The data come from the RNA Mapping Database (RMDB), library OK1LIB. The record gives the reactivity of an RNA of 177 nucleotides to DMS and 2A3. The DMS profile rests on 4,204 reads. For 2A3 the reverse transcriptase was SuperScript II with manganese. The RNA was probed in 150 mM KOAc, 10 mM MgCl2 and 150 mM bicine (pH 8.5) at 24 C.
[RMDB]
RNA sequence: GGGAACGACUCGAGUAGAGUCGAAAAUCACGGAGAACGCCGUCAUCAACGGGAACGGUGACAUCACCGUCGGCUACCGGCUGCUUCUGCCCGAAGUGUUCACCUUGUCGGAAAGCGAGGCGCAAUACCAUCCGAUGAGAUUCGUCUCAUCGGAUGGAAAAGAAACAACAACAACAAC
Reactivity to DMS in 0.01 (KOAc 150mM, MgCl2 10mM, bicine 150mM(pH8.5), 24C), signal-to-noise 3, nucleotides 027 to 126: u080c120a030c050g010g010a130g010a060a130c050g000c000c040g000u000c100a110u020c090a070a060c120g000g010g000a070a030c000g050g000u000g030a130c140a150u030c020a060c020c030g000u010c080g030g010c060u010a130c070c060g010g000c090u010g020c040u020u010c010u040g000c020c000c010g000a030a050g000u040g000u000u010c040a060c090c020u000u000g040u000c040g000g000a070a030a070g000c060g020a110g000g010c080g020c040a080a050u070a210
Reactivity to 2A3 in 0.01 (KOAc 150mM, MgCl2 10mM, bicine 150mM(pH8.5), 24C), signal-to-noise 7, nucleotides 027 to 126: u090c020a030c050g040g020a050g020a290a090c030g000c020c010g070u060c020a150u070c020a100a130c100g040g060g060a060a020c020g010g010u010g080a080c050a070u200c000a020c000c010g020u040c070g040g000c000u020a050c000c020g020g010c010u040g000c000u040u020c010u060g040c000c020c000g020a020a010g040u060g050u110u020c030a060c070c000u040u110g120u120c040g030g080a100a060a040g050c030g030a030g040g010c030g000c060a020a080u100a150